The record gives the reactivity of an RNA of 207 nucleotides to 2A3 and DMS.
Conditions: 150 mM KOAc, 10 mM MgCl2 and 150 mM bicine (pH 8.5), 24 C.
For 2A3, 7,858 sequencing reads were counted.
For 2A3 the reverse transcriptase was SuperScript II with manganese.
Reactivities are given for positions 27 through 156.

RNA sequence: GGGAACGACUCGAGUAGAGUCGAAAACAAAUUACGUUUCGACGUAAUUUGAAAAAAGAUAUGGAUCGUAGGUUGAGAUCGCCAUCGGAAACGAUGGAUGAUCAAUGAUGCCUGCGAUCCUAAGUCAAAAAACCGUUCACUUUCGAGUGAACGGUAAUAACAUUCAAUUGUUCGCAAUUGAAUGUUAAAAAGAAACAACAACAACAAC
Reactivity to 2A3 in 0.01 (KOAc 150mM, MgCl2 10mM, bicine 150mM(pH8.5), 24C), signal-to-noise 4, nucleotides 027 to 156: c000a000a010a000u000u000a000c010g010u000u040u190c280g110a020c010g000u000a000a000u000u000u020g070a100a020a000a000a000a010g020a000u020a000u040g000g000a000u010c010g000u030a000g020g040u030u130g170a040g000a080u000c000g000c000c000a000u000c000g010g000a010a000a000c010g000a000u010g020g000a070u050g000a000u000c010a030a100u170g030a030u020g000c000c000u000g000c000g000a000u000c000c000u000a000a000g000u000c000a130a000a010a000a020a040c000c000g010u010u010c000a000c000u090u110u070c230g110a010g010u010g000a000a000c000g010g000u000a000a000
Reactivity to DMS in 0.01 (KOAc 150mM, MgCl2 10mM, bicine 150mM(pH8.5), 24C), signal-to-noise 2, nucleotides 027 to 156: c000a000a030a020u000u000a000c010g050u000u010u010c280g050a090c000g010u000a010a000u010u000u000g000a000a050a080a090a140a130g000a050u000a140u000g000g010a010u000c010g010u000a010g040g040u000u000g010a070g000a010u010c000g010c010c010a020u000c010g030g010a070a050a110c000g010a040u000g000g000a030u020g030a000u000c000a150a110u000g010a000u010g000c000c000u000g010c020g010a010u000c000c010u000a000a020g030u020c010a010a120a090a080a090a050c000c000g010u000u000c000a010c000u000u010u000c290g010a040g040u000g000a010a010c000g000g000u010a000a010